This 177-nucleotide RNA was probed chemically with 2A3 and DMS. DMS adducts were read by reverse transcription with MarathonRT. The data come from the RNA Mapping Database (RMDB), library OK2TRN. The RNA was probed in 150 mM KOAc, 10 mM MgCl2 and 150 mM bicine (pH 8.5) at 24 C.
RNA sequence: GGGAACGACUCGAGUAGAGUCGAAAAGUCUAGGGAUCCUAGCGAGUACCUAGGAUACGUACUCCAUGGGAUCCAUGUGCUAGCACGAGUGGAUCUCCAUGGCUAGCAUGCUAGCAUGCAUGCUAGCCGAACGAACAGCCUUCGGGCUGUUCGUUCGAAAAGAAACAACAACAACAAC
Reactivity to 2A3 in 0.01 (KOAc 150mM, MgCl2 10mM, bicine 150mM(pH8.5), 24C), signal-to-noise 2, nucleotides 027 to 126: g020u020c020u040a040g080g040g040a010u000c020c010u010a020g040c030g070a020g050u160a050c030c000u040a090g130g060a050u050a150c020g020u040a060c030u000c020c000a070u160g020g000g000a000u010c000c000a010u070g030u000g040c050u070a070g060c020a010c030g020a040g080u020g000g070a060u010c060u030c080c000a060u090g000g010c000u020a000g010c000a000u000g010c000u030a110g150c070a110u240g000c000a000u000g000c020u000a000g010c010
Reactivity to DMS in 0.01 (KOAc 150mM, MgCl2 10mM, bicine 150mM(pH8.5), 24C), signal-to-noise 4, nucleotides 027 to 126: g010u010c040u010a080g010g000g000a060u010c000c010u000a060g000c190g000a070g020u000a060c140c060u000a100g010g010a100u000a060c180g010u010a020c050u000c020c040a180u010g010g000g000a010u000c000c010a030u000g020u000g000c040u010a070g010c040a170c020g000a100g010u010g010g010a030u000c020u000c020c130a060u010g010g010c010u000a010g010c000a000u000g010c020u000a120g030c250a110u020g000c010a000u000g000c000u000a010g000c010
Values cover nucleotides 27 to 126.